An RNA of 207 nucleotides, treated with 2A3 and DMS and read out base by base. For 2A3, 3,612 sequencing reads were counted. For 2A3 the reverse transcriptase was SuperScript II with manganese. Conditions: 150 mM KOAc, 10 mM MgCl2 and 150 mM bicine (pH 8.5), 24 C. Source: RMDB library M2RFPK, as collected in RNAgym.
[RMDB]
RNA sequence: GGGAACGACUCGAGUAGAGUCGAAAAACAUAUUACGAUAUGAUUCAGAUAGUGUCUUACUGGUUCGUACCAAGGGACAUAAUGGUUUCUUGUUUCCAACCAAAGAACAAGUGGCGAGCCUGAAUAAAAAACUGACUGCCGUUCGCGGCAGUCAGAACCAUCUAUAUCUGUUCGCAGAUAUAGAUGGAAAAGAAACAACAACAACAAC
Reactivity to 2A3 in 0.01 (KOAc 150mM, MgCl2 10mM, bicine 150mM(pH8.5), 24C), signal-to-noise 5, nucleotides 027 to 156: a000c030a020u110a030u100u170a070c080g050a030u030a020u100g070a070u080u110c040a040g120a200u140a080g100u050g010u060c010u040u070a110c040u040g010g010u030u110c090g060u140a060c020c020a020a040g020g000g000a000c020a010u150a070a100u110g060g000u000u010u000c000u010u010g030u010u050u000c020c040a060a080c000c020a050a130a000g020a030a020c010a020a030g040u030g080g020c030g010a010g010c000c060u060g060a060a040u110a110a090a020a010a020a020c000u000g000a000c010u000g000c010c010g020u050u040c240g000c000g090g000c000a000g000u000c000a000g000a000a000
Reactivity to DMS in 0.01 (KOAc 150mM, MgCl2 10mM, bicine 150mM(pH8.5), 24C), signal-to-noise 1, nucleotides 027 to 156: a060c010a040u000a090u030u000a080c070g010a100u000a060u010g000a160u010u010c000a070g000a110u000a120g010u000g010u000c030u000u000a070c040u000g000g030u000u000c150g020u040a060c070c020a040a110g020g030g030a050c020a080u010a050a150u000g020g040u000u000u000c020u000u020g020u000u000u000c030c020a050a090c050c050a010a110a060g000a070a060c030a050a080g000u000g030g020c030g020a150g000c030c010u030g010a060a060u040a010a000a080a070a090a110c000u020g040a070c000u030g040c000c020g040u010u000c290g040c050g020g040c000a000g030u000c000a000g000a020a120